An RNA of 177 nucleotides, treated with DMS and 2A3 and read out base by base.
RNA sequence: GGGAACGACUCGAGUAGAGUCGAAAAAUAGUGUUAUUCGUAACACUAUAUAUCCGAACUCAAGGUUUCGUUCCAGAGACAUGCAUGCUAGCAUGAAAGCAACUGAACAAGCGUUCGCGCUUGUUAAGUAGAUUCAGAUAUUCGUAUCUGAAUCUACAAAAGAAACAACAACAACAAC
Reactivity to DMS in 0.01 (KOAc 150mM, MgCl2 10mM, bicine 150mM(pH8.5), 24C), signal-to-noise 6, nucleotides 027 to 126: a010u000a000g010u000g010u000u000a010u000u020c160g030u000a010a010c000a010c000u000a010u000a050u000a120u000c120c030g010a090a050c000u000c010a070a160g010g000u000u000u000c010g010u000u000c000c010a130g000a160g000a160c030a010u000g020c010a100u010g010c190u000a110g000c000a020u000g000a080a100a090g000c150a060a070c110u010g010a020a010c000a020a010g000c000g030u000u000c200g030c010g020c000u000u000g000u000u000a010a090
Reactivity to 2A3 in 0.01 (KOAc 150mM, MgCl2 10mM, bicine 150mM(pH8.5), 24C), signal-to-noise 7, nucleotides 027 to 126: a000u010a010g000u010g000u010u010a030u030u060c220g030u030a010a000c000a010c000u000a000u000a000u000a010u000c060c020g010a180a070c000u000c020a040a060g140g000u000u020u030c000g000u000u000c000c010a010g030a000g000a120c010a000u010g010c010a010u160g160c070u130a070g000c010a010u030g060a080a020a000g080c040a030a090c080u160g050a020a000c040a010a000g000c000g020u070u130c220g000c000g010c050u010u000g000u020u020a060a020
2A3 adducts were read by reverse transcription with SuperScript II with manganese.